RNA sequence: GGGAACGACUCGAGUAGAGUCGAAAAGAUCACCUGUUCGCAGGUGAUCAAUCUCCCACUUGAUCGAAGUCUCACUGCCUCGUUGCCCACGAGGCACGGGCGUAUUGAUCCGCUUCGGCGGAUCAAACUCUCACUGGGAAUUCGUUCCCAGUGAGAGAAAAGAAACAACAACAACAAC
Reactivity to DMS in 0.01 (KOAc 150mM, MgCl2 10mM, bicine 150mM(pH8.5), 24C), signal-to-noise 3, nucleotides 027 to 126: g010a010u000c010a000c000c000u010g010u000u010c170g040c000a000g000g000u010g000a010u000c020a040a080u000c260u000c000c000c020a120c170u000u000g010a050u010c110g010a120a090g010u000c000u000c070a130c210u010g030c000c000u000c010g010u010u020g000c080c130c070a240c080g020a100g000g020c000a000c090g010g000g010c070g000u000a040u020u000g000a010u000c010c000g000c000u010u020c190g010g030c000g000g000a000u000c010a000a020a090
Reactivity to 2A3 in 0.01 (KOAc 150mM, MgCl2 10mM, bicine 150mM(pH8.5), 24C), signal-to-noise 3, nucleotides 027 to 126: g000a010u010c000a000c010c010u000g030u040u080c250g010c130a000g050g000u000g020a000u000c000a000a000u020c010u020c000c010c000a040c060u090u230g110a170u160c090g120a140a050g100u040c040u050c060a100c100u060g010c000c000u060c040g050u070u200g080c020c010c010a070c060g010a090g000g040c000a000c010g000g000g000c000g000u030a040u060u060g000a010u000c020c010g000c000u050u060c260g120g000c000g000g000a000u000c000a000a000a010